RNA sequence: GGGAACGACUCGAGUAGAGUCGAAAACUCAAUGUAGGGAAUAACAUUGAAUUGAUACAAAUACCUUUUUCGGUGUAGGGAAAAACACCGAAUUGAUACAAAUACCUUUCGCAAUGUAGGGAAUAACAAAACAGGCAUCGCUUCGGCGAUGCCUGAACUUGUUUAUUCGCUUCGGCGAAUAAACAAGAAAAGAAACAACAACAACAAC
Reactivity to 2A3 in 0.01 (KOAc 150mM, MgCl2 10mM, bicine 150mM(pH8.5), 24C), signal-to-noise 1, nucleotides 027 to 156: c020u020c010a000a020u040g030u070a090g070g230g060a140a130u120a070a050c020a000u010u010g020a110a030u100u210g120a060u100a140c030a070a120a000u140a040c020c000u030u090u000u010u000c000g000g000u000g000u010a010g000g030g140a120a140a090a000a000c000a000c010c000g000a000a000u000u000g010a000u010a020c000a010a060a020u160a060c000c000u080u050u010c040g010c120a150a040u150g020u020a020g010g020g070a000a150u110a210a040c020a120a000a040a040c000a010g000g000c000a000u060c010g030c020u160u110c250g050g000c000g000a000u000g100c000c000u000g000a000a000